[RMDB]
RNA sequence: GGGAACGACUCGAGUAGAGUCGAAAAGACCAAGUUUCGACUUGGUCAAAAAAUCCUAAGUCCAAGCAUCGAUCUUGGGGCUUUGAUCUAUCGGAAACGAUAGGGAGCUUCAAGGGAGCUUGGAUAUGGAAAAAAGUAUAUCGUUCGCGAUAUACAAAGACUAGUUGUUAUUCGUAACAACUAGUCUAAAAGAAACAACAACAACAAC
Reactivity to 2A3 in 0.01 (KOAc 150mM, MgCl2 10mM, bicine 150mM(pH8.5), 24C), signal-to-noise 3, nucleotides 027 to 156: g010a000c000c000a010a000g010u020u070u210c190g020a030c010u000u020g000g020u000c000a000a000a010a010a010a000u040c020c000u050a100a020g020u000c000c000a000a010g010c030a230u290c040g120a070u040c030u010u000g000g000g040g000c010u300u120u040g050a040u030c000u000a000u000c000g040g040a100a040a060c020g000a010u000a010g000g000g010a000g000c000u020u010c010a000a000g010g020g000a010g000c000u000u000g000g000a000u000a010u040g010g030a060a060a050a030a020a030g010u010a010u010a000u010c010g020u040u090c300g010c010g100a000u000a000u000a000c000a020a050
Reactivity to DMS in 0.01 (KOAc 150mM, MgCl2 10mM, bicine 150mM(pH8.5), 24C), signal-to-noise 2, nucleotides 027 to 156: g000a060c000c020a000a020g000u010u000u010c250g030a070c010u000u000g000g000u000c000a010a000a060a080a110a110u000c000c000u000a050a300g010u010c000c010a010a000g010c000a250u000c150g000a070u000c020u010u000g010g000g000g020c000u000u000u010g010a110u000c010u000a010u000c000g000g010a260a110a250c030g000a040u000a000g000g020g010a010g000c000u000u020c010a010a050g000g010g000a040g030c010u000u000g030g000a010u010a040u000g000g000a010a030a060a100a110a130g000u000a010u000a020u000c000g030u010u020c300g040c030g020a020u000a000u000a010c000a040a110